This 177-nucleotide RNA was probed chemically with 2A3. The reactions ran in a buffer of 150 mM KOAc, 10 mM MgCl2 and 150 mM bicine (pH 8.5), at 24 C. The data come from the RNA Mapping Database (RMDB), library RFM100.
[RMDB]
RNA sequence: GGGAACGACUCGAGUAGAGUCGAAAAUUCGCCUACUUGUUUGAAAAUGCCUCACCGUUUUCCGAAUGUUGUAUGUUUAUUCAGAAACAUCCAGACAUGGUCCGGCCCAUCAGAUGAGUGGCAAGACCCGAUCCUGCAAGUUCGCUUGCAGGAUCGGAAAAGAAACAACAACAACAAC
Reactivity to 2A3 in 0.01 (KOAc 150mM, MgCl2 10mM, bicine 150mM(pH8.5), 24C), signal-to-noise 2, nucleotides 027 to 126: u080u070c090g020c000c000u020a020c030u030u060g030u030u000u050g060a060a030a010a010u110g000c000c030u030c030a020c000c050g050u040u040u140u110c000c040g060a060a000u040g000u010u020g040u030a050u000g040u020u040u040a250u230u090c020a030g150a010a050a000c000a020u020c070c060a030g040a110c030a040u050g000g000u050c000c050g010g000c020c000c020a040u010c010a020g010a020u030g000a010g020u010g010g010c040a000a010g050a010c000